[RMDB]
RNA sequence: GGGAACGACUCGAGUAGAGUCGAAAAGAACAGAAUGCCGCACUGGCUGCCCUGAUGAGAACAAACCCGUGACUAGCGUCGAAACAUCAACAGUGCGGGCUGUUGGUGUCGGCAGCCACUAAAAGAAAUCAUUAUCCUAUUUCGAUAGGAUAAUGAUAAAAGAAACAACAACAACAAC
Reactivity to DMS in 0.01 (KOAc 150mM, MgCl2 10mM, bicine 150mM(pH8.5), 24C), signal-to-noise 2, nucleotides 027 to 126: g020a140a120c090a120g010a090a080u000g030c010c000g000c060a010c090u020g000g000c010u000g000c010c010c000u010g050a030u020g000a070g000a090a070c110a040a120a100c060c070c010g020u020g020a120c110u060a070g020c090g030u000c070g000a020a040a110c050a010u030c010a000a000c070a000g000u020g030c130g010g000g010c000u010g010u000u010g000g000u000g000u000c010g000g050c040a050g000c040c100a090c160u030a090a060a110a110g000a090a060
Reactivity to 2A3 in 0.01 (KOAc 150mM, MgCl2 10mM, bicine 150mM(pH8.5), 24C), signal-to-noise 3, nucleotides 027 to 126: g030a070a040c070a030g090a060a050u050g000c020c000g050c030a020c040u020g040g010c020u030g030c000c000c010u020g030a110u030g050a050g080a040a030c020a080a030a020c010c000c000g000u060g020a120c140u050a050g020c010g030u040c010g050a060a150a000c010a030u020c020a060a020c020a000g030u050g090c010g050g060g000c010u020g000u040u010g000g030u000g070u100c020g030g030c000a000g000c000c000a010c040u140a090a040a000a010g150a030a120